[RMDB]
RNA sequence: GGGAACGACUCGAGUAGAGUCGAAAACGUCUUAAAUUAAAUUUCCCUUGCUGAGCUCAUCUCAGCAAACAAUAACAAAUAACAUAUAAGAACAGCAGGGAAGGUUGUUCUUAUUUGUUACAAUUAAUAUGUCUUACAGAUUCGUCUGUAAGACAUAAAAAGAAACAACAACAACAAC
Reactivity to 2A3 in 0.01 (KOAc 150mM, MgCl2 10mM, bicine 150mM(pH8.5), 24C), signal-to-noise 3, nucleotides 027 to 126: c040g060u060c090u150u220a140a170a160u130u110a130a140a100u050u170u010c010c000c020u000u020g000c000u010g000a000g000c060u070c200a170u140c090u000c000a010g070c000a010a000a000c010a010a080u240a050a010c030a040a150a020u030a020a000c000a000u000a010u000a010a000g000a000a000c010a000g010c000a020g090g060g190a070a050g130g000u010u010g000u010u010c000u000u000a000u000u010u000g000u000u000a010c010a000a060u080u230a100a070
Reactivity to DMS in 0.01 (KOAc 150mM, MgCl2 10mM, bicine 150mM(pH8.5), 24C), signal-to-noise 2, nucleotides 027 to 126: c160g020u010c160u000u000a060a060a100u000u000a060a080a130u000u030u000c010c000c010u000u010g010c000u000g010a000g010c300u030c300a030u030c010u010c000a000g030c000a000a020a080c120a110a060u010a040a070c120a060a110a190u000a000a050c000a010u000a010u010a010a010g010a020a010c000a000g000c000a060g020g000g020a060a080g010g010u000u000g010u000u000c000u010u010a000u000u000u000g000u000u010a010c140a060a090u000u000a060a130